This 207-nucleotide RNA was probed chemically with DMS and 2A3.
RNA sequence: GGGAACGACUCGAGUAGAGUCGAAAACUUGUUGCUUAUCUAAUGGAUAUUACCGAGGUAGACCCUAUCAAGCACGGUCUUUUCUUCGAGAGGUUCCUUGAUAUCUCCAGACAGAAGAUGCCCGACAUUGAUACAGACAUCCAGUCAGAGCGCCGUCAACGUCAGUUCAAUUCGUUGAACUGACGUUAAAAGAAACAACAACAACAAC
Reactivity to DMS in 0.01 (KOAc 150mM, MgCl2 10mM, bicine 150mM(pH8.5), 24C), signal-to-noise 1, nucleotides 027 to 156: c020u010u020g010u000u010g000c020u000u000a100u000c050u000a170a080u000g000g000a070u000a100u000u010a080c060c030g030a130g000g020u010a100g000a070c020c000c010u010a090u000c010a080a050g000c090a130c090g020g000u010c020u000u000u000u000c040u000u000c070g000a140g000a060g000g020u000u010c040c080u000u020g030a140u000a050u010c020u000c010c020a240g010a090c170a050g000a020a080g000a100u000g020c000c000c000g010a080c110a150u000u000g000a110u000a170c100a070g020a040c000a100u000c000c000a070g020u000c070a100g020a070g020c060g020c040c000g000u000c040
Reactivity to 2A3 in 0.01 (KOAc 150mM, MgCl2 10mM, bicine 150mM(pH8.5), 24C), signal-to-noise 1, nucleotides 027 to 156: c040u020u030g040u030u050g050c060u150u080a120u080c040u070a160a000u180g040g000a030u040a030u150u150a110c070c040g000a040g000g010u030a010g050a060c050c000c000u090a070u110c070a070a000g040c080a060c070g000g020u000c000u030u080u030u000c020u050u020c010g080a080g030a060g170g000u010u040c020c010u090u100g050a040u100a040u180c030u000c000c010a090g050a200c020a020g050a030a020g010a060u050g050c030c020c000g040a050c080a110u090u040g010a030u030a080c000a010g070a020c000a020u010c060c000a010g010u050c000a000g000a000g000c010g030c010c010g050u030c060

Description:
The RNA was probed in 150 mM KOAc, 10 mM MgCl2 and 150 mM bicine (pH 8.5) at 24 C. For 2A3 the reverse transcriptase was SuperScript II with manganese. The DMS profile rests on 2,524 reads. Values are in units of 0.01, from 0 to 300, in steps of 10.